Conditions: 150 mM KOAc, 10 mM MgCl2 and 150 mM bicine (pH 8.5), 24 C. Structure probing data (DMS) for a 177-nucleotide construct. For DMS the reverse transcriptase was MarathonRT. The data come from the RNA Mapping Database (RMDB), library OK2TST.
RNA sequence: GGGAACGACUCGAGUAGAGUCGAAAAAAACCGGUGGAUUAUGGGCCAAGGGCUCUUUGAACGGCAAAGCUGCGGGGAUAUUCGUUAGUACUUCCAGUUACGGAGGUGGUCAAGAAAGUACCGUUAACUAAAAUUAGUCGUUCGCGACUAAUUUUAGAAAAGAAACAACAACAACAAC
Reactivity to DMS in 0.01 (KOAc 150mM, MgCl2 10mM, bicine 150mM(pH8.5), 24C), signal-to-noise 2, nucleotides 027 to 126: a040a100a060c070c030g020g000u020g000g010a160u000u000a060u000g010g020g000c030c030a110a090g010g030g010c040u000c040u000u000u020g000a090a050c050g000g010c070a090a050a110g020c050u000g010c050g020g020g000g020a110u000a080u010u010c050g000u010u010a080g030u010a060c040u000u000c020c030a070g000u010u010a090c200g030g000a060g010g000u000g000g000u000c080a070a150g000a040a060a070g000u020a100c050c050g000u010u010a050a150